[RMDB]
Source information
Structure probing data (2A3 and DMS) for a 177-nucleotide construct. The reactions ran in a buffer of 150 mM KOAc, 10 mM MgCl2 and 150 mM bicine (pH 8.5), at 24 C. For 2A3, 2,091 sequencing reads were counted. The data come from the RNA Mapping Database (RMDB), library OK2TST.

RNA sequence: GGGAACGACUCGAGUAGAGUCGAAAAGCCUCGGACGAGGAGGCGCUCGAGGCCUUGAAGUUCUUCGCCCGCCAUGAAGGUCUGGUCUUUGCCCUCGAGAGCGCCCACGCAGGAGCCGUGGCCAUGACCGAGGAUUAGGAUUCGUCCUAAUCCUCGGAAAAGAAACAACAACAACAAC
Reactivity to 2A3 in 0.01 (KOAc 150mM, MgCl2 10mM, bicine 150mM(pH8.5), 24C), signal-to-noise 2, nucleotides 027 to 126: g000c000c000u010c000g000g000a010c020g000a090g080g040a110g020g000c000g050c020u020c000g000a030g000g000c000c020u040u070g040a070a020g050u070u160c000u060u020c020g030c020c040c020g090c060c030a110u180g060a060a030g000g020u000c010u040g040g070u000c000u020u030u060g020c000c010c000u010c020g110a090g000a020g080c050g010c010c020c020a060c020g070c050a080g110g170a070g000c020c000g020u030g000g000c070c000a130u100g020a040
Reactivity to DMS in 0.01 (KOAc 150mM, MgCl2 10mM, bicine 150mM(pH8.5), 24C), signal-to-noise 1, nucleotides 027 to 126: g000c020c000u000c000g000g020a120c060g000a100g000g000a100g020g010c000g020c010u000c010g000a050g000g000c050c050u000u000g000a040a070g000u000u010c040u010u010c060g020c080c030c080g000c090c080a110u000g000a040a090g000g000u000c040u000g020g010u020c030u020u010u000g000c220c010c000u000c070g000a130g000a070g000c040g030c030c000c030a120c080g000c060a130g020g020a170g010c050c010g000u000g000g000c020c060a070u010g000a210